[RMDB]
RNA sequence: GGGAACGACUCGAGUAGAGUCGAAAAUCAAGAGUACAACUGCAUACUAUGAUUGUACUCGGAGUUUAUCAUAGUAGACGAAGUCUAUUACAUGAUACUCAUCUGUCAUGUAAUGCAGUUGACAGAAGAUAGUAUAGACAUUCGUGUCUGUACUAUCAAAAGAAACAACAACAACAAC
Reactivity to 2A3 in 0.01 (KOAc 150mM, MgCl2 10mM, bicine 150mM(pH8.5), 24C), signal-to-noise 9, nucleotides 027 to 126: u120c050a070a030g060a050g100u110a160c000a000a000c000u010g000c000a010u010a020c020u230a020u030g010a020u020u070g080u160a080c080u030c130g020g000a010g000u140u180u060a010u000c000a010u010a030g010u000a000g010a020c120g260a300a020g020u000c000u000a010u010u060a070c070a090u020g000a000u010a010c010u010c020a090u040c030u030g010u000c000a010u000g010u050a220a080u020g000c000a000g000u000u000g010a010c010a020g120a090a010
Reactivity to DMS in 0.01 (KOAc 150mM, MgCl2 10mM, bicine 150mM(pH8.5), 24C), signal-to-noise 9, nucleotides 027 to 126: u040c060a110a110g010a110g000u010a080c000a000a010c010u000g000c010a070u000a060c070u040a020u000g000a030u000u010g000u020a030c140u030c220g010g010a040g000u000u040u020a010u000c000a030u000a050g000u000a010g010a010c020g020a100a140g010u010c010u000a010u000u000a070c140a030u000g000a010u000a020c020u000c050a160u020c070u000g000u010c000a000u010g000u000a040a040u000g000c010a000g000u000u000g000a060c030a120g000a120a090